[RMDB]
RNA sequence: GGGAACGACUCGAGUAGAGUCGAAAAUGGACUUUUUACAGUUCCUACUUAUCCGGUUUUAACGCUGUUAUAUUGGCGCAAAGGUUUACGGAUAAACAACUAAUAAUUAAACCUUUUGUGUGCGAAAAUUGGACGUUUAGGUUCGCCUAAACGUCAAGGAAAUUAGACACUUCGGUGUCUAAUUUCCAAAAGAAACAACAACAACAAC
Reactivity to 2A3 in 0.01 (KOAc 150mM, MgCl2 10mM, bicine 150mM(pH8.5), 24C), signal-to-noise 1, nucleotides 027 to 156: u060g020g000a050c020u110u080u100u130u300a120c220a050g040u130u080c000c000u000a020c080u040u010a010u000c010c000g010g020u100u020u000u010a080a000c020g000c030u010g120u300u000a190u070a060u240u300g040g000c000g000c030a030a020a000g000g000u000u000u030a000c000g000g010a010u000a010a160a010c020a030a030c040u140a040a130u170a020a020u160u080a000a000a000c020c000u010u070u010u190g130u010g000u010g040c040g090a070a050a090a140u140u090g060g020a010c000g000u000u000u000a000g000g000u050u040c120g010c040c000u020a030a010a030c000g000u000c000a000a000
Chemical mapping of a 207-nucleotide RNA with 2A3.
It was measured as part of the RMDB library M2RFPK.
For 2A3 the reverse transcriptase was SuperScript II with manganese.
The RNA was probed in 150 mM KOAc, 10 mM MgCl2 and 150 mM bicine (pH 8.5) at 24 C.